The data come from the RNA Mapping Database (RMDB), library OK2TST.
An RNA of 177 nucleotides, treated with DMS and 2A3 and read out base by base.
2A3 is a SHAPE reagent: it acylates the 2'-hydroxyl of flexible nucleotides of all four kinds.
The 2A3 profile rests on 2,547 reads.
DMS adducts were read by reverse transcription with MarathonRT.
[RMDB]
RNA sequence: GGGAACGACUCGAGUAGAGUCGAAAACGAAGGAUCCAGGAUCCAUCGGUAGUAAUCUGCACGAACACAUAAGGAUCCGGUCGGCGGAUUGGCAGGCGUUGGAUCCAGCUGAUCCUUGUCGACGGGGCGUACACCUGUGGUUCGCCACAGGUGUACGAAAAGAAACAACAACAACAAC
Reactivity to DMS in 0.01 (KOAc 150mM, MgCl2 10mM, bicine 150mM(pH8.5), 24C), signal-to-noise 3, nucleotides 027 to 126: c060g000a090a080g010g020a020u010c010c090a290g000g000a030u000c020c010a010u000c010g000g030u010a110g020u010a030a050u000c030u000g000c040a150c070g010a030a080c080a110c130a150u000a130a100g000g010a060u000c090c070g010g030u010c030g020g000c010g000g000a010u000u000g010g050c020a130g010g000c040g020u020u010g000g000a110u000c010c000a040g010c180u000g000a010u000c000c000u000u010g000u000c030g000a090c040g010g010g000g010
Reactivity to 2A3 in 0.01 (KOAc 150mM, MgCl2 10mM, bicine 150mM(pH8.5), 24C), signal-to-noise 2, nucleotides 027 to 126: c050g040a050a010g020g030a000u000c030c030a050g090g020a020u050c000c010a020u010c020g060g080u030a010g000u020a020a200u030c020u050g010c050a070c300g060a170a030c100a010c020a120u190a200a100g060g020a040u030c000c030g000g010u000c000g010g000c000g010g020a000u020u010g140g010c040a010g010g090c000g080u120u120g080g010a050u000c000c000a000g000c030u080g000a000u000c000c000u030u110g020u010c010g000a010c000g010g000g020g060